[RMDB]
RNA sequence: GGGAACGACUCGAGUAGAGUCGAAAAUGGCUUCCUGCACAUCUGCCUGUGGCUAGGGUCACUCCGCGCGGGCACUGUGGCUUUUGUCUGCAUCUGCACAACUAGAUGAAACUGGUCUUCGGACCAGCUAAGGGAUGGAGUUCGCUCCAUCCCUUAGAAAAGAAACAACAACAACAAC
Reactivity to DMS in 0.01 (KOAc 150mM, MgCl2 10mM, bicine 150mM(pH8.5), 24C), signal-to-noise 3, nucleotides 027 to 126: u010g010g030c140u000u000c020c010u000g010c040a070c040a030u000c110u000g000c010c020u000g040u000g030g020c060u000a130g030g000g000u000c280a120c250u020c010c020g030c000g000c060g000g000g010c030a010c070u000g020u000g000g010c040u000u000u000u010g030u010c060u010g010c060a030u000c030u000g000c110a070c120a070a120c130u000a080g010a040u010g010a050a070a300c000u000g010g020u000c000u000u000c150g020g000a020c000c000a000g000
Reactivity to 2A3 in 0.01 (KOAc 150mM, MgCl2 10mM, bicine 150mM(pH8.5), 24C), signal-to-noise 2, nucleotides 027 to 126: u080g030g050c020u020u000c000c000u030g000c000a000c000a020u060c080u050g010c030c000u030g010u060g260g050c130u160a200g030g020g000u140c030a030c060u050c020c000g000c020g000c000g020g000g000c010a000c000u020g020u030g020g000c030u100u120u070u110g080u030c030u050g000c010a030u020c030u110g040c120a020c030a240a180c050u060a030g000a100u080g110a090a090a050c000u000g000g000u020c000u060u040c180g070g000a010c000c000a000g040
Structure probing data (DMS and 2A3) for a 177-nucleotide construct. For 2A3, 1,571 sequencing reads were counted. It was measured as part of the RMDB library RFMREP. The reactions ran in a buffer of 150 mM KOAc, 10 mM MgCl2 and 150 mM bicine (pH 8.5), at 24 C. The DMS profile rests on 1,886 reads. For DMS the reverse transcriptase was MarathonRT.